The record gives the reactivity of an RNA of 177 nucleotides to DMS and 2A3. The data come from the RNA Mapping Database (RMDB), library OK1LIB. For 2A3 the reverse transcriptase was SuperScript II with manganese. For DMS, 74,009 sequencing reads were counted. The reactions ran in a buffer of 150 mM KOAc, 10 mM MgCl2 and 150 mM bicine (pH 8.5), at 24 C.

RNA sequence: GGGAACGACUCGAGUAGAGUCGAAAACUAUGUACAGACAGUACAGUGGAUAAGGUCUUUAGAUAUCCAACUAUAACAAUGGUACUUGCAGUGGUAUCUAUCAAGAUAGGCAGGCUAUCAUAGAAAGAAGAUGUGGAUUAUUCGUAGUUCGCAUCUUAAAAGAAACAACAACAACAAC
Reactivity to DMS in 0.01 (KOAc 150mM, MgCl2 10mM, bicine 150mM(pH8.5), 24C), signal-to-noise 9, nucleotides 027 to 126: c020u000a050u020g020u000a020c020a130g020a130c240a140g000u000a010c010a030g010u010g000g000a070u010a050a090g000g010u010c060u010u010u020a080g010a060u010a010u000c010c010a060a120c080u010a010u030a070a080c200a070a040u010g000g010u000a040c040u010u010g010c100a100g010u020g010g020u000a010u000c000u010a070u040c240a090a060g010a020u000a030g010g000c060a050g000g000c140u000a020u000c010a050u010a070g010a070a060a070g000
Reactivity to 2A3 in 0.01 (KOAc 150mM, MgCl2 10mM, bicine 150mM(pH8.5), 24C), signal-to-noise 9, nucleotides 027 to 126: c020u020a030u090g000u010a010c020a090g170a060c040a040g080u010a010c010a020g030u060g050g010a050u030a100a100g140g040u040c070u050u060u080a030g010a040u030a010u010c000c000a020a020c030u070a030u020a100a040c080a070a050u050g030g000u030a020c000u020u050g020c030a050g040u060g120g010u030a000u000c010u000a130u080c060a030a020g010a030u020a010g030g010c030a000g020g000c010u000a000u020c010a010u010a020g100a020a090a010g080